[RMDB]
RNA sequence: GGGAACGACUCGAGUAGAGUCGAAAAGAAAACAGUGUGUCAGGAAAGAACUAGUCACUGGGCUAGGGCUAGCCGGCGAGCUGGUGGAUCCGCCAUUCCAUGAAUUCGCCUACGAGAGCUUGAGGACUAGUUAGACAGUGUUCGCACUGUCUAACUAAAAAGAAACAACAACAACAAC
Reactivity to 2A3 in 0.01 (KOAc 150mM, MgCl2 10mM, bicine 150mM(pH8.5), 24C), signal-to-noise 2, nucleotides 027 to 126: g040a010a040a000a020c040a000g040u040g020u030g020u090c090a120g050g070a060a100a020g010a020a030c000u000a020g030u010c030a060c300u190g150g000g070c000u020a030g030g000g000c010u030a010g040c010c020g000g000c000g000a050g000c010u070g010g040u020g010g020a020u040c050c040g000c060c010a050u110u000c000c010a020u070g070a030a070u070u030c010g000c000c000u050a040c040g060a030g020a000g090c010u060u060g060a070g020g060a030c020
Reactivity to DMS in 0.01 (KOAc 150mM, MgCl2 10mM, bicine 150mM(pH8.5), 24C), signal-to-noise 3, nucleotides 027 to 126: g000a100a080a090a090c060a000g030u000g030u010g010u000c030a100g000g000a050a080a070g010a050a040c020u000a000g000u000c020a140c170u000g040g010g000c010u000a040g000g010g000c030u010a100g000c020c060g000g010c030g000a130g000c060u000g010g050u000g000g000a010u010c080c080g010c110c060a090u000u010c030c030a050u000g010a080a140u000u000c050g000c020c000u000a060c050g000a190g000a030g000c040u000u000g020a090g010g000a150c090
This 177-nucleotide RNA was probed chemically with 2A3 and DMS.
The reactions ran in a buffer of 150 mM KOAc, 10 mM MgCl2 and 150 mM bicine (pH 8.5), at 24 C.
Reactivities are given for positions 27 through 126.
2A3 adducts were read by reverse transcription with SuperScript II with manganese.
For DMS, 3,431 sequencing reads were counted.